[RMDB]
RNA sequence: GGGAACGACUCGAGUAGAGUCGAAAACGGGAACAAGGCAAUGCUUAAGAACUGAGUUGAGCAUUCAGGUCUUGGAAACAAGACCUGAAAUAGAUGAUUAGUUCUUCAUCUAUGCCUUGUUCUCAAGGGUACUGUUACAUUUCGAUGUGACAGUACCAAAAGAAACAACAACAACAAC
Reactivity to 2A3 in 0.01 (KOAc 150mM, MgCl2 10mM, bicine 150mM(pH8.5), 24C), signal-to-noise 3, nucleotides 027 to 126: c050g000g000g010a000a000c010a000a000g000g010c000a040a180u040g010c020u150u160a080a020g020a010a010c120u300g280a120g300u110u300g050a010g040c010a010u000u010c000a000g000g000u000c000u000u000g000g000a000a000a000c000a000a000g000a000c000c000u000g000a000a000a000u020a000g000a000u030g010a010u030u030a020g020u010u020c000u000u000c010a000u000c000u010a010u020g000c000c000u000u000g000u000u000c000u000c000a000a000g000

Source: RMDB library OK1LIB, as collected in RNAgym. This 177-nucleotide RNA was probed chemically with 2A3.